[RMDB]
Conditions: 150 mM KOAc, 10 mM MgCl2 and 150 mM bicine (pH 8.5), 24 C.
Chemical mapping of a 177-nucleotide RNA with DMS.

RNA sequence: GGGAACGACUCGAGUAGAGUCGAAAACGCUGUCGCGGAGCUGGACGUCAACGACCACGAGCGGGUGCCCAAGGUAUUCGCCGAACUCAGCGAUGAGAUUGGCGGCAUUGACCGUGUGAUCGUCAACAUGGCGUGACUUGUUCGCAAGUCACGCCAUAAAAGAAACAACAACAACAAC
Reactivity to DMS in 0.01 (KOAc 150mM, MgCl2 10mM, bicine 150mM(pH8.5), 24C), signal-to-noise 1, nucleotides 027 to 126: c060g040c000u000g000u020c010g040c090g010g000a190g010c080u000g000g020a120c110g030u010c050a080a150c010g020a130c000c030a110c030g010a280g000c000g010g000g040u000g000c010c000c050a080a070g000g010u000a070u040u000c010g020c000c000g010a030a090c000u000c020a010g010c300g000a160u000g000a000g000a060u020u000g020g000c000g010g000c170a040u000u010g000a030c060c060g060u000g010u030g000a030u010c080g050u010c030a000a070c240